RNA sequence: GGGAACGACUCGAGUAGAGUCGAAAAUGCUACAUAAGGAUGGAGGAAUCCCUGAUGGAUGUUCCCUCUACCUCCGGCACUCAAGUUUAUUCGCGCAAAGCGAGGAAGAGGAGCCAUUCUCCAACUAUAACUAACGGUCGUUCGCGACCGUUAGUUAAAAAGAAACAACAACAACAAC
Reactivity to 2A3 in 0.01 (KOAc 150mM, MgCl2 10mM, bicine 150mM(pH8.5), 24C), signal-to-noise 3, nucleotides 027 to 126: u090g030c020u070a100c010a170u170a080a000g040g080a150u090g020g000a020g020g040a080a130u060c010c010c010u040g080a060u130g010g020a010u060g080u110u140c050c010c000u000c000u000a060c000c000u010c010c000g030g000c000a010c020u070c050a070a050g040u010u110u210a210u150u100c070g000c030g000c080a070a280a110g050c110g000a010g000g000a000a010g000a070g070g000a020g050c020c000a000u060u000c000u060c020c000a000a020c040u090a040
Reactivity to DMS in 0.01 (KOAc 150mM, MgCl2 10mM, bicine 150mM(pH8.5), 24C), signal-to-noise 2, nucleotides 027 to 126: u000g050c070u000a060c130a010u050a160a090g000g000a130u010g000g010a040g010g000a050a120u000c010c000c050u000g000a060u060g010g000a160u020g000u000u020c090c000c010u000c080u020a120c040c000u000c000c000g000g000c020a110c110u020c060a060a120g000u010u020u060a040u060u020c180g010c040g010c060a060a080a110g000c030g000a000g000g000a070a030g000a040g000g000a130g000c100c040a030u000u000c000u000c000c060a080a100c140u000a170
This 177-nucleotide RNA was probed chemically with 2A3 and DMS.
The RNA was probed in 150 mM KOAc, 10 mM MgCl2 and 150 mM bicine (pH 8.5) at 24 C.
For DMS the reverse transcriptase was MarathonRT.
For 2A3, 1,544 sequencing reads were counted.